[RMDB]
RNA sequence: GGGAACGACUCGAGUAGAGUCGAAAAGGAAGCCUGCUUCAGACAGGAGUAAUCCCCGCUGAAACAGGGUUUUCACCCUUCCUUUCUUCGGGUUUCCUUCCUCUGCUUGCGGCCUCGCCCGGAGUCUUCGAAUCCAGCGCAGGUUCUGACGCGACCGGUGUCAAUCAUUGUUCGCAAUGAUUGACACAAAAGAAACAACAACAACAAC
Reactivity to 2A3 in 0.01 (KOAc 150mM, MgCl2 10mM, bicine 150mM(pH8.5), 24C), signal-to-noise 2, nucleotides 027 to 156: g040g020a050a000g000c020c060u110g000c070u040u050c010a070g000a130c180a170g030g010a010g020u040a020a040u070c040c010c000c000g000c050u020g020a010a000a050c300a220g000g030g020u060u070u210u250c130a050c000c000c000u000u020c010c000u010u000u000c000u010u030c010g000g020g030u010u020u020c020c000u020u050c010c010u010c000u020g120c130u030u040g020c010g020g000c020c000u020c000g030c020c020c020g020g010a060g000u010c060u140u140c120g040a120a110u050c020c020a070g090c050g040c110a070g000g020u040u070c020u070g070a070c020g010c030g080a070c000c070g070

An RNA of 207 nucleotides, treated with 2A3 and read out base by base. The reactions ran in a buffer of 150 mM KOAc, 10 mM MgCl2 and 150 mM bicine (pH 8.5), at 24 C. The 2A3 profile rests on 1,685 reads. For 2A3 the reverse transcriptase was SuperScript II with manganese.